[RMDB]
This 207-nucleotide RNA was probed chemically with DMS and 2A3. Values are in units of 0.01, from 0 to 300, in steps of 10.
RNA sequence: GGGAACGACUCGAGUAGAGUCGAAAACUCUUCCAUCUCUUUCUCAGGAGGAGACCAAGGCACAGGACAUUCUGGGAGCAGUGACCCUUCUGCUGGAGGGAGUGAUGGCAGCACGGGGACAACUGGGACCCACUUGCCUCUCAUCCCUCCUGGGGCAGUCACUCAUAAAUUUCGAUUUAUGAGUGACAAAAGAAACAACAACAACAAC
Reactivity to DMS in 0.01 (KOAc 150mM, MgCl2 10mM, bicine 150mM(pH8.5), 24C), signal-to-noise 1, nucleotides 027 to 156: c020u000c010u000u000c020c020a250u000c010u000c030u000u000u000c000u000c100a140g040g030a070g000g000a070g000a070c040c050a050a030g040g000c080a100c030a070g020g000a130c050a100u000u000c040u010g020g010g000a160g040c030a100g030u000g000a130c020c020c000u000u000c100u010g040c040u000g000g000a070g000g000g000a090g020u000g000a140u000g000g020c000a070g040c080a080c110g030g020g010g000a110c020a140a160c100u000g020g000g020a280c050c000c000a030c050u010u000g000c000c020u020c060u000c080a190u000c020c020c000u000c010c030u010g000g000g040g040c110a240
Reactivity to 2A3 in 0.01 (KOAc 150mM, MgCl2 10mM, bicine 150mM(pH8.5), 24C), signal-to-noise 4, nucleotides 027 to 156: c020u030c030u080u050c030c010a170u040c030u030c010u090u260u060c060u010c030a020g020g000a000g000g040a090g020a040c040c060a070a050g060g000c030a080c050a070g050g100a080c030a160u150u030c070u090g010g020g040a030g020c010a020g010u040g080a090c000c030c010u070u070c050u090g060c030u040g010g050a040g030g040g010a030g010u070g050a100u180g040g020c000a010g000c030a020c160g030g000g000g010a060c050a130a070c130u110g080g020g140a050c010c010c000a030c000u020u120g000c020c000u020c000u000c000a190u030c030c000c000u010c000c000u000g010g000g000g000c020a030

Reactivities are given for positions 27 through 156. For 2A3, 3,313 sequencing reads were counted. The RNA was probed in 150 mM KOAc, 10 mM MgCl2 and 150 mM bicine (pH 8.5) at 24 C. The data come from the RNA Mapping Database (RMDB), library OK3TST. For DMS, 2,506 sequencing reads were counted.